Chemical mapping of a 177-nucleotide RNA with DMS and 2A3. Conditions: 150 mM KOAc, 10 mM MgCl2 and 150 mM bicine (pH 8.5), 24 C.

[RMDB]
RNA sequence: GGGAACGACUCGAGUAGAGUCGAAAAUUACCUCCCUUCGGGGAGGUAAACUGAACGCUGCAAGCGGCAGCGCGCUCGCUUGCGCACACUCGCACAAUAAAAGCAGUAUGCACUUCGGUGCAUACAACGACAGUCAGAAGUUCGCUUCUGACUGUCGAAAAGAAACAACAACAACAAC
Reactivity to DMS in 0.01 (KOAc 150mM, MgCl2 10mM, bicine 150mM(pH8.5), 24C), signal-to-noise 1, nucleotides 027 to 126: u000u000a010c000c000u000c000c000c000u000u050c210g030g020g050g000a000g050g000u000a010a000a080c120u000g010a100a080c070g030c020u000g040c000a040a010g000c010g000g010c060a160g050c180g000c190g000c020u000c030g010c040u000u000g040c000g000c040a030c120a050c100u000c030g010c180a070c240a100a070u010a080a140a020a060g000c120a040g050u000a030u000g000c000a010c000u000u000c120g030g000u000g000c000a000u000a000c000a020a070
Reactivity to 2A3 in 0.01 (KOAc 150mM, MgCl2 10mM, bicine 150mM(pH8.5), 24C), signal-to-noise 2, nucleotides 027 to 126: u020u000a000c000c000u000c050c010c000u010u020c200g070g010g000g000a030g020g000u000a000a000a000c000u010g050a090a010c060g000c060u160g000c030a010a070g030c020g030g000c000a050g300c090g000c050g000c060u160c030g000c010u000u010g000c030g000c020a010c010a010c030u060c040g090c030a010c040a110a200u180a180a120a070a000g070c040a020g010u000a000u000g000c000a000c020u010u040c210g080g010u000g000c000a000u000a000c010a000a010
For DMS, 629 sequencing reads were counted. DMS adducts were read by reverse transcription with MarathonRT. Values cover nucleotides 27 to 126. For 2A3 the reverse transcriptase was SuperScript II with manganese.